[RMDB]
RNA sequence: GGGAACGACUCGAGUAGAGUCGAAAAGAGGUGGCGGUUUCGCUGGUCGGUGUAUCGGCUUCAACCACUGUCACCAUCAUCGGCGCUUCAAAACUGCUGCGCUCAUUACCGGUCGCAGUCACUACCAACUUACGGAGUACUUCGGUACUCCGUAAGUAAAAGAAACAACAACAACAAC
Reactivity to 2A3 in 0.01 (KOAc 150mM, MgCl2 10mM, bicine 150mM(pH8.5), 24C), signal-to-noise 2, nucleotides 027 to 126: g050a030g000g000u010g030g020c050g020g020u020u040u100c060g000c010u000g040g000u020c060g120g070u150g000u130a120u090c040g000g000c000u140u070c070a040a040c010c040a020c030u030g050u020c010a020c070c000a070u000c000a010u010c010g040g000c080g000c010u090u110c010a070a070a080a060c030u060g010c000u050g000c040g060c010u010c030a050u050u160a070c050c050g030g050u050c000g000c040a010g030u060c020a000c070u100a070c090c020a040
Reactivity to DMS in 0.01 (KOAc 150mM, MgCl2 10mM, bicine 150mM(pH8.5), 24C), signal-to-noise 3, nucleotides 027 to 126: g030a140g000g020u000g000g030c280g010g000u010u000u030c180g010c030u000g030g030u010c030g030g000u010g050u020a030u000c020g000g020c040u000u010c090a060a110c080c110a070c070u000g000u000c030a040c030c020a080u000c010a050u000c020g000g000c040g050c090u000u000c100a070a060a080a110c070u010g010c010u000g000c020g010c010u000c040a050u010u010a130c220c090g010g020u000c020g020c040a030g020u000c100a070c090u000a170c030c070a090
This 177-nucleotide RNA was probed chemically with 2A3 and DMS. For DMS, 2,629 sequencing reads were counted. 2A3 adducts were read by reverse transcription with SuperScript II with manganese. The reactions ran in a buffer of 150 mM KOAc, 10 mM MgCl2 and 150 mM bicine (pH 8.5), at 24 C.